[RMDB]
RNA sequence: GGGAACGACUCGAGUAGAGUCGAAAACCACCUACUCUUCGCGCCGCUAGUCGAGCGGACUAAGGUGGACUUCCCUAUUCUCUCACGCUCUUUUCUUUUUGUGCAGCGGCGGGUGGGUUCCCAGGGUAAAACACAAUUGGUGUUUCCCGGUAACACCGUUUCCUACAAGGUUCGCCUUGUAGGAAACAAAAGAAACAACAACAACAAC
Reactivity to 2A3 in 0.01 (KOAc 150mM, MgCl2 10mM, bicine 150mM(pH8.5), 24C), signal-to-noise 2, nucleotides 027 to 156: c010c000a020c000c000u030a040c020u080c100u270u240c110g050c100g000c110c050g000c080u080a070g100u160c070g080a000g020c010g000g000a000c010u100a070a050g000g000u010g020g020a030c060u040u050c000c000c010u010a100u110u100c090u000c020u060c010a060c040g080c030u070c000u020u190u040u050c050u080u250u030u140u150g130u100g000c060a030g000c020g270g030c270g070g050g000u190g020g040g000u190u210c000c090c040a000g040g010g030u120a030a060a060a000c070a040c020a080a220u150u130g050g010u010g030u000u010u110c020c000c040g010g060u030a020a000c020a010c020c010
An RNA of 207 nucleotides, treated with 2A3 and read out base by base. 2A3 adducts were read by reverse transcription with SuperScript II with manganese. Reactivities are given for positions 27 through 156. Source: RMDB library VIROID, as collected in RNAgym.